[RMDB]
RNA sequence: GGGAACGACUCGAGUAGAGUCGAAAAGGAAGCCUCAUGCGCAAGACACGCAAUGCAUGAAAGGUUAGCAAGACACGAAGCCCAGUGUAACAACCUGACAGAAUCUUAGAAUUCUCGCAGGGCUCCAAAAGAUAUAAUAUUUCGAUAUUAUAUUUUUAAAAGAAACAACAACAACAAC
Reactivity to DMS in 0.01 (KOAc 150mM, MgCl2 10mM, bicine 150mM(pH8.5), 24C), signal-to-noise 4, nucleotides 027 to 126: g010g010a140a090g000c010c000u010c010a040u000g000c010g010c110a110a120g000a150c200a110c160g020c050a140a110u040g000c020a010u010g000a060a080a040g010g000u010u020a080g020c080a100a130g010a100c050a030c030g010a090a100g020c020c010c010a140g000u010g000u010a090a120c120a060a110c010c000u000g010a170c050a020g000a010a020u000c010u050u070a080g000a170a020u000u010c000u000c170g050c000a010g010g000g010c110u030c090c050a050
Reactivity to 2A3 in 0.01 (KOAc 150mM, MgCl2 10mM, bicine 150mM(pH8.5), 24C), signal-to-noise 3, nucleotides 027 to 126: g080g040a090a010g020c010c000u030c020a030u050g000c030g030c080a080a090g080a100c050a020c110g080c000a060a140u240g000c020a000u020g020a160a070a010g020g000u030u040a030g070c060a080a000g050a030c010a010c060g090a070a000g030c020c000c000a020g000u010g000u100a090a030c040a040a070c020c000u020g060a040c010a040g010a010a010u000c000u070u180a090g040a240a040u090u000c000u010c030g010c010a000g000g080g000c020u040c020c000a000